Structure probing data (DMS) for a 177-nucleotide construct. For DMS the reverse transcriptase was MarathonRT. Conditions: 150 mM KOAc, 10 mM MgCl2 and 150 mM bicine (pH 8.5), 24 C.

RNA sequence: GGGAACGACUCGAGUAGAGUCGAAAAAAAGGAUCUUUACGAUGCUAUAGUAUUUCAAGGUACCUGUUUAGAUAUGUGUCCCACAUUCGAGAGAUCAAGAAGAAACGUUGAAUAUACUGUGUAUUCAUCAGCACGAUGGAUUCGUCCAUCGUGCUGAAAAAGAAACAACAACAACAAC
Reactivity to DMS in 0.01 (KOAc 150mM, MgCl2 10mM, bicine 150mM(pH8.5), 24C), signal-to-noise 1, nucleotides 027 to 126: a090a010a090g020g030a110u000c000u000u000u020a210c160g020a050u000g010c050u010a080u000a050g050u000a010u000u000u000c090a080a070g020g040u000a020c150c060u000g000u010u020u030a100g000a050u000a020u000g010u000g020u000c000c000c020a300c050a020u000u030c080g020a150g020a030g030a080u000c040a060a080g000a250a110g000a060a170a030c100g040u000u010g020a040a000u030a040u000a010c030u020g020u010g020u000a090u000u010c050a080